[RMDB]
RNA sequence: GGGAACGACUCGAGUAGAGUCGAAAAGAGCUUUUGUCCGGAAUGGUUCCGCCGUGAUCGGGCCAUGCAAUAGUUGCCAACGACAACUAUGCUCCGGUUGCUCAGGCAUCGUAACGCUGCUUGAAAGAUGACGGCAAUCGCUUCGGCGAUUGCCGAAUCAGGUUUCUUAGUUCGCUAAGAAACCUGAAAAAGAAACAACAACAACAAC
Reactivity to 2A3 in 0.01 (KOAc 150mM, MgCl2 10mM, bicine 150mM(pH8.5), 24C), signal-to-noise 2, nucleotides 027 to 156: g030a010g000c030u090u110u180u240g110u050c010c020g010g040a050a060u060g000g010u300u300c010c040g000c040c160g120u160g090a180u140c040g020g000g000c010c020a010u010g000c030a080a240u000a030g000u000u000g010c030c080a160a070c160g070a120c030a000a000c030u010a000u020g000c000u000c000c010g000g020u030u100g000c010u010c010a000g020g020c000a060u010c040g060u070a070a060c110g000c030u060g010c000u020u070g060a060a090a060g090a090u140g050a080c020g000g000c010a000a000u020c030g000c010u030u060c210g110g000c010g000a000u000u010g000c010c000g020a000a000
Reactivity to DMS in 0.01 (KOAc 150mM, MgCl2 10mM, bicine 150mM(pH8.5), 24C), signal-to-noise 1, nucleotides 027 to 156: g000a010g020c040u000u010u020u000g020u000c020c010g000g000a150a080u010g020g020u000u010c000c010g010c070c060g000u010g020a100u000c010g010g020g020c000c060a050u010g000c170a110a100u010a020g030u010u000g000c000c030a170a250c240g010a100c000a010a000c010u010a000u010g000c060u000c040c010g020g030u000u010g040c020u000c010a060g010g010c020a060u000c110g000u010a090a120c090g020c100u000g000c040u030u000g010a140a100a160g010a150u000g000a140c020g010g100c010a010a010u010c000g010c040u010u020c300g010g000c000g020a040u010u000g020c000c000g010a000a000
This 207-nucleotide RNA was probed chemically with 2A3 and DMS. Values are in units of 0.01, from 0 to 300, in steps of 10.